Structure probing data (2A3 and DMS) for a 177-nucleotide construct. It was measured as part of the RMDB library OK2TST. The reactions ran in a buffer of 150 mM KOAc, 10 mM MgCl2 and 150 mM bicine (pH 8.5), at 24 C. The 2A3 profile rests on 670 reads. For DMS, 675 sequencing reads were counted. High 2A3 reactivity points to a flexible backbone, as in loops and unpaired stretches.
RNA sequence: GGGAACGACUCGAGUAGAGUCGAAAAUAGGACUUGAUCAACAACAUCAUGGAUUAAUUUCUAAAACUAUUCAGAAUAAACUGCAAUUUACCGGUAAAUAUGGACAGAUCAAGGUUAUUCCGUCCGAUACUUUUAAAAUCUUCGGAUUUUAAAAGUAAAAAGAAACAACAACAACAAC
Reactivity to 2A3 in 0.01 (KOAc 150mM, MgCl2 10mM, bicine 150mM(pH8.5), 24C), signal-to-noise 1, nucleotides 027 to 126: u060a000g030g000a020c000u020u010g030a000u020c010a020a080c000a030a070c050a090u050c020a000u100g030g060a080u130u110a080a050u150u090u070c100u120a190a090a070a040c080u120a130u230u240c030a080g080a160a000u160a210a030a000c020u040g030c020a060a100u000u070u120a140c040c030g050g050u130a090a080a000u180a050u080g070g020a010c050a050g060a020u000c010a030a000g000g000u000u050a020u120u000c020c020g000u000c000c000g000a030
Reactivity to DMS in 0.01 (KOAc 150mM, MgCl2 10mM, bicine 150mM(pH8.5), 24C), signal-to-noise 1, nucleotides 027 to 126: u000a090g030g000a150c020u020u000g000a010u010c010a090a160c240a050a170c100a060u000c050a130u000g000g020a040u000u000a030a060u000u010u000c010u020a080a040a080a190c040u000a020u000u000c030a050g010a150a130u010a000a130a110c030u000g000c160a070a070u000u000u000a040c100c080g000g000u000a010a090a120u020a060u010g010g010a120c090a120g000a000u000c030a000a100g000g000u000u000a020u010u000c030c020g020u020c020c010g000a300